[RMDB]
About this RNA
Structure probing data (2A3 and DMS) for a 207-nucleotide construct. 2A3 adducts were read by reverse transcription with SuperScript II with manganese. For 2A3, 1,370 sequencing reads were counted.
RNA sequence: GGGAACGACUCGAGUAGAGUCGAAAAGGGUGAGACCUAGGAACCGUAGGGGUAUUCUCAAAGGAAGCUUUUGCAGUGACGCCCAUGUAAGUGGGAUACAACAACAGAACUCGUAUGAGUAGCCUAAUAAAUCGGACCUUCUUCGGAAGGUCCGAAAUCUAGGUUACAUGUUCGCAUGUAACCUAGAAAAAGAAACAACAACAACAAC
Reactivity to 2A3 in 0.01 (KOAc 150mM, MgCl2 10mM, bicine 150mM(pH8.5), 24C), signal-to-noise 2, nucleotides 027 to 156: g000g000g010u040g050a090g030a060c020c010u060a080g000g120a090a040c040c030g040u050a040g000g020g010g000u030a080u120u060c070u020c030a070a070a010g050g020a040a020g000c000u060u030u040u020g040c030a040g010u000g040a020c060g050c000c010c010a020u050g050u110a140a080g010u030g020g020g000a040u060a070c040a100a010c000a000a050c020a040g060a050a050c000u020c050g050u230a100u140g010a010g000u030a020g060c000c010u060a110a110u100a110a140a030u030c010g000g000a000c000c000u010u000c000u000u010c070g060g000a000a000g000g000u020c000c000g000a000a010a000
Reactivity to DMS in 0.01 (KOAc 150mM, MgCl2 10mM, bicine 150mM(pH8.5), 24C), signal-to-noise 1, nucleotides 027 to 156: g010g040g030u000g010a150g010a070c020c040u000a120g000g000a030a080c090c030g010u000a110g020g010g050g000u010a090u000u000c040u010c030a070a130a240g020g010a050a050g000c050u000u000u000u000g050c030a100g020u000g030a180c030g000c010c000c010a030u000g040u020a040a230g030u000g000g060g000a080u000a090c100a130a090c070a130a060c010a100g000a080a030c050u000c010g000u000a150u010g010a060g040u010a110g020c020c010u000a030a090u000a010a040a130u000c000g030g000a030c010c000u000u000c000u010u000c300g040g010a060a020g070g000u000c010c000g000a000a020a060